This 177-nucleotide RNA was probed chemically with DMS and 2A3. The reactions ran in a buffer of 150 mM KOAc, 10 mM MgCl2 and 150 mM bicine (pH 8.5), at 24 C. For 2A3, 1,784 sequencing reads were counted. Source: RMDB library M2PK50, as collected in RNAgym.

[RMDB]
RNA sequence: GGGAACGACUCGAGUAGAGUCGAAAACGAAGGACUUUCGAGUCCUUCGACUUACCGAGAAAGAUCCUCGGUAUAAAUCUGGAACCCUUGGAAACAACGGAAUGAACGGAAUCUUCGGAUUCCGUAAGUACCUUAGUCACUUCGGUGACUAAGGUACAAAAGAAACAACAACAACAAC
Reactivity to DMS in 0.01 (KOAc 150mM, MgCl2 10mM, bicine 150mM(pH8.5), 24C), signal-to-noise 2, nucleotides 027 to 126: c050g000a030a030g010g020a030c010u010u010u020c210g000a020g030u010c000c000u000u010c000g000a060c120u000u000a010c000c000g010a000g000a100a200a130g010a170u020c020c010u010c020g010g000u000a000u000a010a080a100u010c110u000g020g020a100a110c070c000c010u030u000g000g000a090a060a110c040a020a030c100g000g000a060a100u010g000a100a020c000g010g000a000a010u000c010u000u010c130g020g000a010u010u000c000c000g010u000a000a060
Reactivity to 2A3 in 0.01 (KOAc 150mM, MgCl2 10mM, bicine 150mM(pH8.5), 24C), signal-to-noise 2, nucleotides 027 to 126: c030g000a000a010g010g010a010c000u060u090u120c200g030a040g000u000c000c050u020u010c010g010a000c010u010u020a000c010c010g010a030g000a000a240a030g090a050u020c000c000u000c000g000g000u010a010u050a000a020a000u060c030u050g080g020a060a050c010c020c030u010u040g080g020a070a100a050c020a030a020c070g010g080a070a110u160g080a100a040c000g010g000a000a000u000c000u030u110c160g060g000a020u000u000c000c000g000u000a010a010